Notes:
An RNA of 207 nucleotides, treated with 2A3 and read out base by base. Values cover nucleotides 27 to 156.

[RMDB]
RNA sequence: GGGAACGACUCGAGUAGAGUCGAAAAACGCGCGGUCUGCAAGCCUGGUUGGACUGGGCUCCCUGCUCUUUGUGUGUUGGGUGGGGAGGCGAGUGAAGGGUUAGCUUGGGUGCAGACGCCAGCUGUCGACAAAUUCGGGGCUCAGUGAUACCAGGGCGUACCACUAGUACUUCGGUACUAGUGGUACAAAAGAAACAACAACAACAAC
Reactivity to 2A3 in 0.01 (KOAc 150mM, MgCl2 10mM, bicine 150mM(pH8.5), 24C), signal-to-noise 2, nucleotides 027 to 156: a000c060g010c010g000c010g050g010u020c030u070g020c050a120a040g100c000c000u010g000g000u000u060g060g100a030c000u000g000g010g030c030u070c000c010c010u080g030c030u100c110u040u200u150g060u030g030u060g050u130u110g020g020g040u150g040g000g000g010a090g030g010c050g020a030g030u080g060a060a080g030g040g000u120u190a010g000c010u080u150g020g000g010u100g000c040a030g000a020c000g000c010c000a010g000c020u040g080u160c030g040a040c050a100a120a080u210u150c080g060g000g080g000c010u030c010a020g000u030g040a050u060a060c020c020a000g000g010g000c010